Background: An RNA of 170 nucleotides, treated with DMS and 2A3 and read out base by base. It was measured as part of the RMDB library 15KLIB. For 2A3, 6,333 sequencing reads were counted. For DMS the reverse transcriptase was MarathonRT. The RNA was probed in 150 mM KOAc, 10 mM MgCl2 and 150 mM bicine (pH 8.5) at 24 C.
[RMDB]
RNA sequence: GGGAACGACUCGAGUAGAGUCGAAAACUGUGCAGUAUGCUCAUAAACAUGACAUACAAAUUACUAAUGAGAGCUACAAUAAUUAUGUACCCUCAUAUGUUAAACCUGAUAGUGUGUCUACCAGCGAUAAGAGGGCAGUUCGCUGCCCUCAAAAGAAACAACAACAACAAC
Reactivity to DMS in 0.01 (KOAc 150mM, MgCl2 10mM, bicine 150mM(pH8.5), 24C), signal-to-noise 3, nucleotides 027 to 129: c040u030g040u040g020c150a140g040u030a090u110g030c210u010c060a000u030a060a160a210c120a150u030g040a000c010a030u090a000c080a110a170a060u130u000a040c040u070a070a020u000g010a030g020a060g050c280u000a020c010a040a090u040a120a110u140u070a040u000g000u060a030c070c020c020u010c000a010u020a000u020g000u060u020a020a120a140c020c090u030g030a060u030a070g030u020g010u080g020u090c030u050a070c000c050a020g000c030g000a110u020a100a050
Reactivity to 2A3 in 0.01 (KOAc 150mM, MgCl2 10mM, bicine 150mM(pH8.5), 24C), signal-to-noise 5, nucleotides 027 to 129: c040u050g010u090g070c000a040g030u050a010u070g000c030u020c030a010u110a050a220a050c120a010u050g000a010c000a010u030a000c010a010a030a030u150u090a020c050u090a110a000u020g000a000g000a000g010c050u010a010c010a030a080u190a080a080u280u260a080u100g000u000a000c000c010c000u010c020a020u030a040u070g060u040u080a090a100a050c000c000u030g020a050u010a040g050u100g020u010g030u070c000u010a070c010c030a010g000c000g090a010u040a250a050